[RMDB]
RNA sequence: GGGAACGACUCGAGUAGAGUCGAAAAGAUUGGAGGUAGCAUUCAAAGAUCAGAUGUGCUUUUCCUCACUUUGGAGAUGAACACUCUGGGUUUUACAGCAUUAACCUGCCUAACCUUCAUGGUGAGACUUGAAGAAAACUUUCGAGUUUUCUUCAAGAAAAGAAACAACAACAACAAC
Reactivity to DMS in 0.01 (KOAc 150mM, MgCl2 10mM, bicine 150mM(pH8.5), 24C), signal-to-noise 8, nucleotides 027 to 126: g000a130u000u000g010g010a040g010g010u000a070g010c060a080u010u010c130a080a080a090g000a080u000c040a030g000a040u010g020u010g000c040u000u000u010u000c070c000u000c240a110c250u000u000u010g020g010a040g010a040u000g010a040a060c020a030c050u000c020u000g010g000g000u000u000u010u000a090c250a110g000c100a070u010u010a090a060c140c050u000g000c030c030u000a080a050c020c000u000u000c050a050u000g010g010u000g000a130g010a190
Reactivity to 2A3 in 0.01 (KOAc 150mM, MgCl2 10mM, bicine 150mM(pH8.5), 24C), signal-to-noise 5, nucleotides 027 to 126: g070a050u080u120g020g010a000g000g030u050a010g010c030a020u050u100c090a130a100a050g060a100u060c020a010g030a080u120g030u020g020c030u050u020u050u040c010c000u040c020a150c110u120u120u140g040g020a040g010a020u060g050a100a020c020a010c050u000c030u020g060g000g000u020u030u030u100a060c040a020g020c000a040u110u060a030a030c000c010u040g030c010c000u040a090a090c030c010u030u040c050a050u110g050g050u070g060a060g030a080